[RMDB]
RNA sequence: GGGAACGACUCGAGUAGAGUCGAAAAAGAUGUGAGGGCGAUCUGGCUGCGACAUCUGUCACCCCAUUGAUCGCCAGGGUUGAUUCGGCUGAUCUGGCUGGCUAGGCGGUGUCCCCUUCCUCCCUCAGUGUAUAGAUUAGUUCGCUAAUCUAUACACAAAAGAAACAACAACAACAAC
Reactivity to DMS in 0.01 (KOAc 150mM, MgCl2 10mM, bicine 150mM(pH8.5), 24C), signal-to-noise 9, nucleotides 027 to 126: a040g000a050u010g010u000g010a110g010g010g010c150g000a080u010c100u010g010g010c100u000g010c130g010a040c020a050u000c050u000g010u000c050a110c040c170c000c030a100u010u000g010a050u000c070g010c010c010a060g000g000g010u000u010g000a160u010u000c100g010g010c060u010g010a060u000c030u000g010g010c050u010g010g000c080u010a090g010g010c090g010g000u000g000u000c020c010c010c040u000u000c020c010u000c010c010c000u000c050a120
Reactivity to 2A3 in 0.01 (KOAc 150mM, MgCl2 10mM, bicine 150mM(pH8.5), 24C), signal-to-noise 9, nucleotides 027 to 126: a000g070a060u100g030u050g060a130g030g030g000c030g030a120u030c070u100g080g000c050u070g050c060g040a010c010a040u050c050u040g050u020c030a150c010c000c010c010a050u050u160g020a050u050c010g000c010c010a020g070g030g010u170u150g090a170u170u110c050g050g000c070u110g020a070u030c020u030g060g000c050u040g020g000c040u040a080g020g010c020g010g010u020g010u030c010c010c000c000u020u030c010c010u010c010c000c000u010c020a020